Structure probing data (2A3 and DMS) for a 170-nucleotide construct. Reactivities are given for positions 27 through 129. The RNA was probed in 150 mM KOAc, 10 mM MgCl2 and 150 mM bicine (pH 8.5) at 24 C. For DMS, 3,095 sequencing reads were counted. For 2A3, 1,296 sequencing reads were counted. The data come from the RNA Mapping Database (RMDB), library 15KLIB.
RNA sequence: GGGAACGACUCGAGUAGAGUCGAAAAAUUCUCGGAAAGCUCUCCCAAGAAGAACCAGAAUCCCUCAAGAGAGAGGAGAAUCCCCAUGACGCUGGAAGAGACUUCCGGGUAACCAAGUCAAGGAGAAUAAUCGGGUACUUCGGUACCCGAAAAAGAAACAACAACAACAAC
Reactivity to 2A3 in 0.01 (KOAc 150mM, MgCl2 10mM, bicine 150mM(pH8.5), 24C), signal-to-noise 1, nucleotides 027 to 129: a000u020u000c000u000c010g000g000a090a000a000g000c000u000c000u010c000c060c000a000a000g110a060a050g000a050a000c060c020a050g030a000a040u000c040c000c000u000c000a090a030g090a000g000a010g000a070g150g000a150g050a120a100u060c050c000c000c000a110u030g000a000c000g000c030u000g000g020a020a010g040a000g000a000c060u030u000c000c000g000g000g000u000a000a030c020c040a000a010g000u020c060a140a160g050g060a120g110a020a220u250a130a070
Reactivity to DMS in 0.01 (KOAc 150mM, MgCl2 10mM, bicine 150mM(pH8.5), 24C), signal-to-noise 2, nucleotides 027 to 129: a160u070u010c020u020c030g040g000a040a050a010g010c050u000c010u040c090c000c000a070a040g010a050a150g070a080a050c200c090a190g010a120a050u090c070c000c020u000c020a120a050g020a170g010a000g000a000g000g000a070g000a020a090u120c030c080c010c000a120u000g000a090c150g010c030u020g040g010a000a040g000a020g030a020c060u020u020c040c080g000g020g050u060a010a130c020c050a040a010g030u080c070a100a070g000g000a050g050a080a050u020a120a080